[RMDB]
Annotation
Chemical mapping of a 177-nucleotide RNA with 2A3. The reactions ran in a buffer of 150 mM KOAc, 10 mM MgCl2 and 150 mM bicine (pH 8.5), at 24 C.
RNA sequence: GGGAACGACUCGAGUAGAGUCGAAAAUUAUCAUCUUGAAGAAUAUGAUAUUUUACAUCAACGUUCUUUAUUCAAUGAAGCACGUAUUGCCGUUACUUUAAUUCGUGGGAAUCAUUACUUUAAAGCGGGAGAUUUCCGAAUUCGUUCGGAAAUCUCCAAAAGAAACAACAACAACAAC
Reactivity to 2A3 in 0.01 (KOAc 150mM, MgCl2 10mM, bicine 150mM(pH8.5), 24C), signal-to-noise 1, nucleotides 027 to 126: u080u100a000u000c000a000u000c000u230u280g020a300a270g120a120a020u000a000u000g000a000u000a000u000u060u020u000a160c120a100u230c020a000a000c020g000u000u000c000u000u100u100a160u000u120c120a100a180u160g000a000a000g080c100a000c100g000u120a120u030u060g160c120c000g180u080u050a100c000u080u140u080a030a050u060u000c080g000u000g050g040g050a060a060u060c000a080u030u010a180c000u040u120u300a140a000a000g120c120g000
2A3 adducts were read by reverse transcription with SuperScript II with manganese. The data come from the RNA Mapping Database (RMDB), library OK1LIB.